[RMDB]
RNA sequence: GGGAACGACUCGAGUAGAGUCGAAAAAGUCUCGCUCUGUGCCAGGCUGGAGUGCAGUGGCACGAUCUCAGCUCACUGCAACCUCUGCCUCCCGGGUUUAAGCAAUUCUCCUGCCUCAGCCACCAGAGUAGCUGGGACUACAGGCGUGUGCCACCAACCAUUAAUCCCUAUUCGUAGGGAUUAAUGGAAAAGAAACAACAACAACAAC
Reactivity to 2A3 in 0.01 (KOAc 150mM, MgCl2 10mM, bicine 150mM(pH8.5), 24C), signal-to-noise 4, nucleotides 027 to 156: a000g030u000c000u010c010g040c000u040c020u060g110u120g010c020c030a030g000g010c010u030g020g020a050g030u090g010c010a010g000u020g030g010c040a040c080g120a230u080c090u050c140a040g000c030u080c070a010c000u000g000c010a030a070c020c010u040c030u060g050c020c010u050c000c020c010g060g000g010u050u060u070a040a020g010c040a060a080u130u020c010u000c020c010u020g000c000c010u010c050a010g010c000c020a060c050c050a030g020a020g060u030a020g020c040u080g000g000g010a000c020u040a030c030a020g020g000c020g000u120g100u130g040c020c000a030c010c010a020a020
Reactivity to DMS in 0.01 (KOAc 150mM, MgCl2 10mM, bicine 150mM(pH8.5), 24C), signal-to-noise 2, nucleotides 027 to 156: a110g010u020c010u010c060g030c000u010c030u000g050u000g010c000c060a070g020g040c010u010g020g010a060g010u010g000c000a030g030u000g020g020c010a170c100g000a070u020c080u000c060a170g000c030u000c030a080c020u000g020c020a060a030c060c010u010c020u010g020c040c010u010c000c030c010g020g040g010u010u000u010a060a060g000c040a040a070u010u000c040u000c010c020u000g010c000c000u000c030a040g010c020c010a120c040c040a110g000a110g030u000a030g030c020u000g020g010g020a030c000u010a060c010a070g020g020c040g050u000g030u010g030c020c020a100c020c020a080a300